[RMDB]
RNA sequence: GGGAACGACUCGAGUAGAGUCGAAAAGCACUGAGCCGCCAGGAUGAGUCCAUAGCGAUAGGAGGGGAUGCUAGGAGUCGGCGGCGACCGAAGCGAGGGGGAAAGUAAAGAGAGCAACGGGGCUAGCAAGGUGAUGUGUUCGCACAUCACAAAAGAAACAACAACAACAAC
Reactivity to DMS in 0.01 (KOAc 150mM, MgCl2 10mM, bicine 150mM(pH8.5), 24C), signal-to-noise 4, nucleotides 027 to 129: g000c040a040c040u000g000a110g000c000c040g000c050c010a050g020g010a100u010g000a050g030u050c010c030a030u020a050g040c080g030a110u000a090g000g030a050g000g000g000g000a060u030g000c050u030a060g050g020a050g000u010c050g030g000c030g010g000c100g000a000c060c040g040a120a060g000c120g010a060g000g000g000g000g000a000a000a010g000u000a020a030a030g000a000g000a060g020c040a040a030c120g030g000g020g040c020u000a060g000c040a050a020g020
Reactivity to 2A3 in 0.01 (KOAc 150mM, MgCl2 10mM, bicine 150mM(pH8.5), 24C), signal-to-noise 9, nucleotides 027 to 129: g050c030a020c090u060g020a000g040c000c010g000c010c020a030g080g040a100u140g050a030g070u000c010c010a170u090a050g030c050g090a090u080a050g050g020a040g000g000g000g000a020u090g020c030u030a020g010g020a020g060u050c070g020g010c010g010g000c020g020a030c000c000g020a030a000g030c030g030a040g010g000g000g000g010a030a010a010g020u060a010a030a000g030a000g000a000g010c010a010a050c040g020g000g020g000c010u030a030g020c040a090a020g100

The record gives the reactivity of an RNA of 170 nucleotides to DMS and 2A3. 2A3 adducts were read by reverse transcription with SuperScript II with manganese. The RNA was probed in 150 mM KOAc, 10 mM MgCl2 and 150 mM bicine (pH 8.5) at 24 C. Source: RMDB library 15KLIB, as collected in RNAgym. High 2A3 reactivity points to a flexible backbone, as in loops and unpaired stretches.